[RMDB]
RNA sequence: GGGAACGACUCGAGUAGAGUCGAAAAGAUAUGGAUGUCCUAGGGAGCGUGUCGGAAACGACGAACGCGAGGAUCUAGAGACAUCCUAAGUCAAACGUACAACCAAGGUUCGCCUUGGUUGUACGAACGACACAUAUCUCUUCGGAGAUAUGUGUCGAAAAGAAACAACAACAACAAC
Reactivity to 2A3 in 0.01 (KOAc 150mM, MgCl2 10mM, bicine 150mM(pH8.5), 24C), signal-to-noise 3, nucleotides 027 to 126: g030a020u080a020u190g000g010a010u010g010u000c010c000u000a000g000g020g000a030g000c010g000u050g020u030c010g020g010a090a070a070c020g020a020c040g070a150a010c010g000c000g000a080g000g000a010u000c000u020a040g030a030g000a140c000a000u020c000c000u000a090a010g050u010c040a100a010a080c020g010u000a010c000a000a010c000c000a000a000g050g010u050u120c270g130c060c000u010u000g000g000u000u000g010u000a000c000g000a000a000
Reactivity to DMS in 0.01 (KOAc 150mM, MgCl2 10mM, bicine 150mM(pH8.5), 24C), signal-to-noise 3, nucleotides 027 to 126: g010a040u010a300u010g000g010a010u000g010u000c000c000u000a020g000g000g000a010g010c000g040u000g000u000c000g000g020a110a090a170c010g020a020c010g020a140a030c000g030c010g010a070g000g010a020u000c000u000a020g000a200g000a000c000a000u000c000c000u000a020a070g020u000c030a070a060a240c000g000u000a000c000a000a000c000c000a000a010g000g020u010u030c230g020c000c000u000u000g000g000u000u000g010u000a000c000g000a020a060